The record gives the reactivity of an RNA of 177 nucleotides to DMS and 2A3. The 2A3 profile rests on 20,080 reads. The data come from the RNA Mapping Database (RMDB), library OK1LIB. Values cover nucleotides 27 to 126. For 2A3 the reverse transcriptase was SuperScript II with manganese. For DMS the reverse transcriptase was MarathonRT.

RNA sequence: GGGAACGACUCGAGUAGAGUCGAAAAAUAGAGCGGUCCGAGAGCUAGCCCUGAAGUCAGCAUACAAGUCGCGCUAAAAGGCAGAUACAACUACGCCGAUCUAUAGUGACGAAGGCCUCAGGUCUUCCACCAUUACUGUUUUCGAACAGUAAUGGUGAAAAGAAACAACAACAACAAC
Reactivity to DMS in 0.01 (KOAc 150mM, MgCl2 10mM, bicine 150mM(pH8.5), 24C), signal-to-noise 8, nucleotides 027 to 126: a060u030a070g000a040g010c020g010g010u020c070c040g000a090g000a110g010c050u010a120g000c020c010c000u000g010a140a070g010u010c050a080g010c060a110u030a090c220a090a120g010u010c040g000c030g000c040u010a030a080a100a110g000g000c010a040g000a150u020a080c190a080a090c090u020a080c130g000c020c000g000a070u020c080u010a080u010a050g010u000g010a090c050g010a030a030g010g000c000c010u010c130a060g010g030u000c000u000u010c050
Reactivity to 2A3 in 0.01 (KOAc 150mM, MgCl2 10mM, bicine 150mM(pH8.5), 24C), signal-to-noise 9, nucleotides 027 to 126: a000u100a010g040a010g010c010g000g030u070c080c050g050a050g000a010g090c020u040a050g010c010c000c000u010g030a040a010g030u070c060a030g030c020a030u100a210c050a110a050g100u120c040g010c010g000c040u040a060a070a020a010g030g000c010a010g030a060u180a110c060a110a040c080u110a050c070g000c010c000g010a010u000c020u030a080u030a120g110u080g050a030c030g010a020a000g010g000c000c020u190c070a040g000g000u000c000u020u010c000